[RMDB]
RNA sequence: GGGAACGACUCGAGUAGAGUCGAAAAGGGGUCAAUUGAAAUCCCAGAGGGAGGGACAUGUCCUGAAGCCUCCACGGGACAACAGCCCUCCUACCCACCUGGAACUGAUUGACGGAGGCACCCAAAAGUAGCUGUAAUGUUCGCAUUACAGCUACAAGCUAUAGACCUACUUCGGUAGGUCUAUAGCAAAAGAAACAACAACAACAAC
Reactivity to 2A3 in 0.01 (KOAc 150mM, MgCl2 10mM, bicine 150mM(pH8.5), 24C), signal-to-noise 2, nucleotides 027 to 156: g060g000g030g000u010c010a040a070u020u090g070a080a060a080u110c050c010c020a010g050a030g020g010g000a010g020g020g000a020c110a180u190g010u020c000c020u050g030a130a030g000c000c010u030c010c000a010c020g000g000g000a020c010a040a020c020a180g060c000c010c000u000c010c000u000a010c030c000c000a090c000c010u020g000g050a120a100c060u220g030a050u090u070g020a070c090g000g010a000g010g010c000a010c010c020c000a010a140a010a050g050u050a000g000c000u000g000u010a000a000u010g010u030u130c270g000c090a000u010u000a000c000a000g000c000u000a000c000a000a010

This 207-nucleotide RNA was probed chemically with 2A3. For 2A3, 1,439 sequencing reads were counted. 2A3 adducts were read by reverse transcription with SuperScript II with manganese. It was measured as part of the RMDB library RNAMAK. The RNA was probed in 150 mM KOAc, 10 mM MgCl2 and 150 mM bicine (pH 8.5) at 24 C.